Structure probing data (2A3 and DMS) for a 177-nucleotide construct. It was measured as part of the RMDB library TTRDES. The reactions ran in a buffer of 150 mM KOAc, 10 mM MgCl2 and 150 mM bicine (pH 8.5), at 24 C. DMS adducts were read by reverse transcription with MarathonRT. The 2A3 profile rests on 2,212 reads. For DMS, 1,472 sequencing reads were counted.
RNA sequence: GGGAACGACUCGAGUAGAGUCGAAAAAAAGAUAUGGACACAUAAUAACCCUUGCUCGUUGAAAGAACGUCGGAAACGACGUUCUGGAGAGCAUGUGUAGGAUAGGUUAUUAGUGUCCUAAGUCAAACCCCAAAGUACAGUUCGCUGUACUUUGGGGAAAAGAAACAACAACAACAAC
Reactivity to 2A3 in 0.01 (KOAc 150mM, MgCl2 10mM, bicine 150mM(pH8.5), 24C), signal-to-noise 1, nucleotides 027 to 126: a020a000a020g000a010u020a000u050g000g010a020c010a020c040a130u000a020a010u000a000a000c000c050c000u000u000g000c000u020c030g300u300u000g010a010a010a010g010a020a010c000g000u000c010g000g000a010a000a000c000g000a000c000g000u010u000c000u000g000g000a000g000a010g050c000a000u020g110u040g150u170a150g160g300a280u160a280g000g000u000u000a010u000u000a000g000u000g000u020c000c000u000a000a010g000u020c000a060a010a300
Reactivity to DMS in 0.01 (KOAc 150mM, MgCl2 10mM, bicine 150mM(pH8.5), 24C), signal-to-noise 1, nucleotides 027 to 126: a120a070a070g000a020u000a080u010g010g000a010c020a000c000a100u000a010a010u000a020a020c010c030c000u000u000g020c000u010c040g000u000u000g000a260a170a010g000a000a000c000g010u000c000g010g000a010a010a040c000g000a010c010g000u000u000c010u010g010g000a020g010a020g030c000a000u000g020u010g040u020a130g010g010a250u020a190g000g020u000u000a010u000u000a020g010u000g010u000c000c000u000a020a050g010u000c000a080a090a210